[RMDB]
RNA sequence: GGGAACGACUCGAGUAGAGUCGAAAAGAUAUGGAACAUAUUAUAGCGUGUUGUCAGCUCGGCGGAUCGGAAACGAUCCGGCGAGCUUGGAUUUACACGAAUGUAGUGUUCCUAAGUCAAAGGUUUCGUUACUAUGUUCGCAUAGUAACGAAACCAAGCAAACUACUCUGUUCGCAGAGUAGUUUGCAAAAGAAACAACAACAACAAC
Reactivity to 2A3 in 0.01 (KOAc 150mM, MgCl2 10mM, bicine 150mM(pH8.5), 24C), signal-to-noise 1, nucleotides 027 to 156: g020a020u050a040u180g000g000a040a010c030a030u220a080u180u220a060u050a080g090c000g000u010g000u000u070g010u000c000a000g010c000u010c010g190g190c000g090g000a000u000c000g010g040a180a070a040c000g000a000u050c060c010g010g000c010g000a000g010c000u000u030g010g000a000u110u020u230a000c000a000c030g030a020a090u080g020u010a030g060u000g000u000u000c000c000u000a080a010g020u060c020a090a030a160g000g000u000u000u000c010g000u000u000a000c000u000a020u010g020u030u040c130g020c150a000u000a000g000u010a000a000c000g000a010a000a000c000c000a000a000